[RMDB]
RNA sequence: GGGAACGACUCGAGUAGAGUCGAAAACAUGAUCUAAGGGUGGUGUUUUCUACCUUCUGACAUCAGAAUGUGAAGAAGAGGACACUAAAACCCUCACUGAGCAUCCUCCAUAGACUGUCCUGAACCACUCUGUGGUCAGUGUGUAUUAUCCGGAAGAUGAGGCUUUUAAUUUCGAUUAAAAGCCUCAAAAAGAAACAACAACAACAAC
Reactivity to DMS in 0.01 (KOAc 150mM, MgCl2 10mM, bicine 150mM(pH8.5), 24C), signal-to-noise 1, nucleotides 027 to 156: c030a060u000g020a080u010c050u020a130a000g010g070g070u010g030g000u010g030u000u010u000u020c020u000a110c080c040u000u010c010u010g000a180c110a110u000c040a160g020a080a140u000g000u000g000a200a040g020a170a100g010a050g000g000a060c000a150c060u000a020a080a160a090c090c030c010u010c020a090c090u020g020a190g000c040a070u000c020c000u000c010c000a120u000a090g030a050c090u000g020u010c080c040u010g020a100a080c040c020a040c030u000c060u000g020u000g030g010u010c000a050g010u010g000u000g020u010a080u010u000a110u010c000c010g000g030a060a120g000a300
Reactivity to 2A3 in 0.01 (KOAc 150mM, MgCl2 10mM, bicine 150mM(pH8.5), 24C), signal-to-noise 2, nucleotides 027 to 156: c020a070u110g010a110u070c020u060a060a020g000g010g020u000g010g020u040g000u000u000u020u010c020u010a130c050c000u000u000c010u040g080a060c000a020u130c010a130g050a090a050u080g000u030g040a050a000g040a020a010g000a010g000g010a000c000a010c040u070a040a050a080a100c050c000c000u000c010a010c050u060g010a050g010c000a060u030c010c020u000c000c000a020u090a110g040a050c030u030g050u010c010c010u010g100a090a030c010c070a030c060u220c150u210g000u000g020g040u000c000a010g020u010g040u000g040u090a010u110u140a050u250c010c110g260g060a000a000g060a120

Description
The record gives the reactivity of an RNA of 207 nucleotides to DMS and 2A3. For 2A3 the reverse transcriptase was SuperScript II with manganese. For 2A3, 925 sequencing reads were counted.